RNA sequence: GGGAACGACUCGAGUAGAGUCGAAAAGAUGAAAAAUCAACAUGGUUACUGAUAAAAGCAGAUAGGGCUUAGAUUCAUGCUAGCAGUGGCUUCCUAGAGCGCCCACCACCGUUGGGCCUCAGAGCUGCCCCUUAUGGGCCAGGGUGAAUUUGCAGAAGAUCCAUUAGUGAUUCGUCACUAAUGGAUCAAAAGAAACAACAACAACAAC
Reactivity to DMS in 0.01 (KOAc 150mM, MgCl2 10mM, bicine 150mM(pH8.5), 24C), signal-to-noise 1, nucleotides 027 to 156: g000a160u000g000a030a080a030a170a100u010c020a060a080c050a090u000g030g020u000u000a160c060u000g040a160u000a020a140a120a070g040c030a080g040a150u010a090g000g030g000c030u000u000a090g020a060u000u000c050a040u000g010c070u010a060g060c030a030g000u000g000g000c020u000u000c030c030u000a150g010a030g030c110g020c010c010c020a050c000c020a170c090c080g000u000u000g030g000g010c020c010u000c020a160g000a060g030c050u000g000c010c040c020c050u010u000a080u000g030g020g050c020c010a030g030g030g000u000g010a030a200u000u000u010g000c030a070g000a090a130
Reactivity to 2A3 in 0.01 (KOAc 150mM, MgCl2 10mM, bicine 150mM(pH8.5), 24C), signal-to-noise 3, nucleotides 027 to 156: g030a020u070g060a040a060a040a010a050u090c020a020a070c020a080u070g050g000u060u080a050c020u060g080a050u100a090a100a060a010g030c010a010g040a150u130a100g040g030g000c010u120u110a030g010a080u090u100c050a020u180g040c000u030a050g000c010a010g030u020g010g020c020u070u060c030c020u040a060g000a000g000c110g020c010c000c000a000c010c040a060c050c060g110u110u010g010g000g000c000c020u000c000a010g000a020g000c020u020g000c000c000c000c010u150u210a120u200g010g020g010c020c000a030g050g000g000u040g020a050a090u070u050u120g000c010a030g040a140a000
The data come from the RNA Mapping Database (RMDB), library OK3TST. Chemical mapping of a 207-nucleotide RNA with DMS and 2A3. DMS adducts were read by reverse transcription with MarathonRT. For DMS, 2,494 sequencing reads were counted. The RNA was probed in 150 mM KOAc, 10 mM MgCl2 and 150 mM bicine (pH 8.5) at 24 C. Reactivities are given for positions 27 through 156.